Annotation
This 177-nucleotide RNA was probed chemically with 2A3 and DMS. Values are in units of 0.01, from 0 to 300, in steps of 10. It was measured as part of the RMDB library TTRDES. Conditions: 150 mM KOAc, 10 mM MgCl2 and 150 mM bicine (pH 8.5), 24 C. Reactivities are given for positions 27 through 126. The DMS profile rests on 1,469 reads.
RNA sequence: GGGAACGACUCGAGUAGAGUCGAAAAGAUAUGGAACCGAAGCAACUUUUGACGGCUUAAUAUCGGAAACGAUAUGUAAGCCGAUAAGUUGUUAGGUUCCUAAGUCAAACUCCAGUUCGCUGGAGAAUCGUUAUUACUGCUUCGGCAGUAAUAACGAAAAAGAAACAACAACAACAAC
Reactivity to 2A3 in 0.01 (KOAc 150mM, MgCl2 10mM, bicine 150mM(pH8.5), 24C), signal-to-noise 2, nucleotides 027 to 126: g010a030u040a030u180g020g000a070a000c010c020g000a040a000g040c000a000a000c020u070u080u160u300g240a170c100g010g010c000u010u020a000a000u000a000u000c000g000g080a040a130a000c000g000a020u000a000u050g300u070a040a020g050c000c000g010a010u000a000a000g000u000u000g040u140u000a010g000g000u000u000c000c000u000a030a000g000u000c020a020a050a080c010u000c010c000a020g020u080u130c270g040c110u020g000g030a040g010a030a080
Reactivity to DMS in 0.01 (KOAc 150mM, MgCl2 10mM, bicine 150mM(pH8.5), 24C), signal-to-noise 2, nucleotides 027 to 126: g030a060u010a300u000g020g020a000a000c000c000g010a210a300g000c000a010a020c000u010u010u020u020g000a280c150g010g000c010u010u000a000a040u010a000u010c010g010g010a190a140a260c010g030a010u000a000u000g000u010a030a010g000c000c000g030a030u000a000a030g000u010u010g020u000u010a290g010g020u000u000c000c000u010a000a040g010u000c030a040a150a250c020u000c000c000a000g040u000u040c300g060c050u010g000g000a020g000a050a060